The record gives the reactivity of an RNA of 177 nucleotides to 2A3 and DMS. Reactivities are given for positions 27 through 126. DMS adducts were read by reverse transcription with MarathonRT. The reactions ran in a buffer of 150 mM KOAc, 10 mM MgCl2 and 150 mM bicine (pH 8.5), at 24 C.
RNA sequence: GGGAACGACUCGAGUAGAGUCGAAAACAGCAGAUCGCAAACAGCGUUGUUCACUUGAGGGUGAUGAUAGCACAAUAGAGCAAUACUUUGGAUCUGCUUACGUAAAGAAAGGAAAGCAAAAAGGAACACUCCGAACAGUCUUCGGACUGUUCGGAGUAAAAGAAACAACAACAACAAC
Reactivity to 2A3 in 0.01 (KOAc 150mM, MgCl2 10mM, bicine 150mM(pH8.5), 24C), signal-to-noise 1, nucleotides 027 to 126: c030a000g030c000a010g030a000u030c020g010c300a000a020a100c100a040g000c010g070u010u040g000u050u030c040a050c090u110u080g220a180g030g220g080u060g020a130u100g100a100u130a100g000c010a010c000a010a130u080a160g010a000g000c000a000a020u080a010c020u060u030u060g030g000a020u000c010u000g000c020u000u060a030c030g020u030a000a000a100g130a130a070a000g130g070a060a080a020g030c030a030a030a050a000a000g190g050a080a000c020
Reactivity to DMS in 0.01 (KOAc 150mM, MgCl2 10mM, bicine 150mM(pH8.5), 24C), signal-to-noise 1, nucleotides 027 to 126: c210a110g000c000a020g060a000u000c000g030c020a040a050a060c240a090g000c000g100u000u000g050u020u000c020a110c300u000u000g000a140g010g000g000u000g000a140u010g050a120u020a070g000c050a140c010a010a080u020a140g000a020g000c020a010a010u020a020c090u000u000u010g010g030a020u000c000u020g000c000u000u000a100c120g020u000a060a050a080g030a020a100a080g010g000a020a020a020g030c080a000a080a080a060a120g000g010a060a050c080